This 177-nucleotide RNA was probed chemically with 2A3 and DMS. Source: RMDB library TTRDES, as collected in RNAgym. The RNA was probed in 150 mM KOAc, 10 mM MgCl2 and 150 mM bicine (pH 8.5) at 24 C. For DMS the reverse transcriptase was MarathonRT.
RNA sequence: GGGAACGACUCGAGUAGAGUCGAAAAGAUAUGGAAUCCCAGGUGGGAGUAUCGAUCGGAAACGAUCGGGAGUACUUUGAUCACCGGGAUUCCUAAGUCAAAACGUUGCCUGUUCGCAGGCAACGAACCAUGGUUAUAGGUUCGCCUAUAACCAUGGAAAAGAAACAACAACAACAAC
Reactivity to 2A3 in 0.01 (KOAc 150mM, MgCl2 10mM, bicine 150mM(pH8.5), 24C), signal-to-noise 7, nucleotides 027 to 126: g010a010u060a030u100g000g000a000a010u000c040c060c100a140g050g000u020g020g200g080a070g010u020a040u300c010g010a000u000c010g000g020a050a040a040c010g000a010u000c000g000g020g010a090g040u030a010c010u200u240u300g180a220u230c000a000c010c000g000g010g000a000u000u000c000c000u000a040a010g030u000c020a010a020a090a130c020g000u000u010g000c000c000u030g070u090u070c300g000c090a000g000g000c000a000a000c000g010a010a000
Reactivity to DMS in 0.01 (KOAc 150mM, MgCl2 10mM, bicine 150mM(pH8.5), 24C), signal-to-noise 6, nucleotides 027 to 126: g010a030u010a300u010g000g000a020a010u000c000c000c010a150g080g010u010g010g010g000a020g020u000a010u000c000g010a010u000c000g010g000a100a060a160c000g010a010u000c000g000g000g030a300g010u000a010c050u000u000u010g010a200u010c010a010c000c000g010g010g010a010u000u000c000c000u000a010a070g010u000c030a100a060a150a220c020g010u000u000g010c000c000u000g000u000u010c250g010c000a010g000g010c000a000a000c000g020a040a110